RNA sequence: GGGAACGACUCGAGUAGAGUCGAAAAGGAACCGGAUGGCAUCACGUUGUUGCAGUACCAGAUGGCAUCUUAAAUCCGAUCUGCAAAUAAGCAUGUAGAAAGCUGAUGUGGGCUUUAGCUGGACGGGGGAAUACAGGCAACUUCGGUUGCCUGUAAAUCGAUACUGUAGAUUCGUCUACAGUAUCGAAAAAGAAACAACAACAACAAC
Reactivity to DMS in 0.01 (KOAc 150mM, MgCl2 10mM, bicine 150mM(pH8.5), 24C), signal-to-noise 2, nucleotides 027 to 156: g010g010a070a050c030c000g000g020a300u010g010g050c000a150u000c030a140c110g020u010u000g040u000u000g000c000a070g020u000a090c040c010a070g010a260u010g020g070c040a090u010c050u000u000a100a070a090u000c000c020g020a100u000c000u000g020c060a020a080a120u000a040a110g020c040a120u000g020u000a070g000a070a040a130g020c030u010g000a100u000g000u000g030g030g020c040u000u010u000a050g020c050u010g000g010a090c000g000g000g000g000g010a120a220u000a050c040a000g000g020c000a010a010c010u000u010c280g020g000u000u000g000c000c000u010g000u000a000a020a060
Reactivity to 2A3 in 0.01 (KOAc 150mM, MgCl2 10mM, bicine 150mM(pH8.5), 24C), signal-to-noise 2, nucleotides 027 to 156: g050g000a060a020c040c020g020g000a030u020g050g000c040a000u020c040a030c100g040u050u030g040u080u050g060c040a030g000u050a070c010c050a040g000a050u010g000g000c000a030u040c040u120u150a110a120a060u050c040c000g010a080u000c010u050g040c010a090a010a120u200a150a010g060c000a030u070g000u050a010g050a070a070a000g020c070u040g050a050u040g050u070g050g010g000c030u060u060u080a040g020c010u020g040g030a020c020g000g000g000g000g010a010a030u080a010c010a000g010g000c000a000a000c030u020u050c110g100g000u000u000g000c010c000u000g000u010a010a010a000